[RMDB]
RNA sequence: GGGAACGACUCGAGUAGAGUCGAAAAUUGAAUGAAAACCAAGUCAGAAAACUGCACUUUUUAAAGCUAAUGAUAGUGGAGCAUACUUAGCUAGAAUGCUGCUCUUUUUAAACGAUUGGUACAACGACUUUGGAUCAGAAUUCGUUCUGAUCCAAAGAAAAGAAACAACAACAACAAC
Reactivity to DMS in 0.01 (KOAc 150mM, MgCl2 10mM, bicine 150mM(pH8.5), 24C), signal-to-noise 3, nucleotides 027 to 126: u000u020g000a150a100u000g000a040a120a130a050c010c000a050a050g010u020c050a250g000a020a010a050a050c090u010g020c010a030c010u000u030u000u000u000a030a140a130g000c020u000a010a010u000g000a120u000a070g020u000g000g000a090g030c100a090u000a080c080u000u000a010g010c040u000a120g000a010a010u000g000c190u000g000c010u000c000u000u010u010u010u010a050a080a080c180g010a180u020u000g020g000u010a060c070a010a070c140g000a130
Reactivity to 2A3 in 0.01 (KOAc 150mM, MgCl2 10mM, bicine 150mM(pH8.5), 24C), signal-to-noise 2, nucleotides 027 to 126: u020u030g040a030a070u090g040a070a060a020a030c000c000a000a030g150u040c030a010g060a150a070a060a150c010u020g010c020a060c080u100u010u010u010u190a110a220a030g000c010u020a050a020u150g060a150u030a120g030u060g120g080a040g000c020a040u050a120c020u070u020a000g010c000u000a000g030a050a000u050g020c040u020g000c000u030c000u080u030u010u020u090a110a140a000c030g030a010u030u040g030g000u020a060c010a050a010c090g110a030